[RMDB]
RNA sequence: GGGAACGACUCGAGUAGAGUCGAAAACGUCUCACUUUCGAGUGAGACGAAAGAAAAAGGCUAGGACCGGCCAAAUAAACGUCCAAAAAGAUCGAAAGAUCAAAAGUUGGCAGUUCGCUGCCAACAACUGACAUAAGAGUUUCGACUCUUAUGUCAGAAAAGAAACAACAACAACAAC
Reactivity to 2A3 in 0.01 (KOAc 150mM, MgCl2 10mM, bicine 150mM(pH8.5), 24C), signal-to-noise 2, nucleotides 027 to 126: c010g000u000c000u010c000a000c010u040u080u070c190g130a010g010u000g000a000g010a020c000g010a010a050a000g030a020a140a010a020a010g030g000c030u080a050g030g000a010c040c050g070g010c000c010a000a050a000u170a020a040a010c010g000u000c000c000a040a030a040a030a020g010a000u010c010g030a120a040a030g010a000u020c020a020a010a030a130g010u000u000g000g000c000a000g010u020u070c130g050c100u010g000c000c000a000a000c000a000a000
Reactivity to DMS in 0.01 (KOAc 150mM, MgCl2 10mM, bicine 150mM(pH8.5), 24C), signal-to-noise 3, nucleotides 027 to 126: c020g020u000c010u000c000a000c000u020u010u040c220g010a020g040u000g000a000g000a000c000g000a010a060a100g020a040a090a080a160a150g000g020c010u010a080g010g000a010c030c080g010g000c010c030a080a100a080u010a020a070a110c190g000u000c000c020a130a100a110a130a100g000a010u010c000g000a130a060a160g010a020u000c020a090a040a050a090g000u000u000g000g010c000a020g010u000u010c220g010c000u000g000c000c000a010a010c010a060a130
Structure probing data (2A3 and DMS) for a 177-nucleotide construct. The 2A3 profile rests on 6,820 reads. For DMS the reverse transcriptase was MarathonRT. For DMS, 2,767 sequencing reads were counted. The reactions ran in a buffer of 150 mM KOAc, 10 mM MgCl2 and 150 mM bicine (pH 8.5), at 24 C.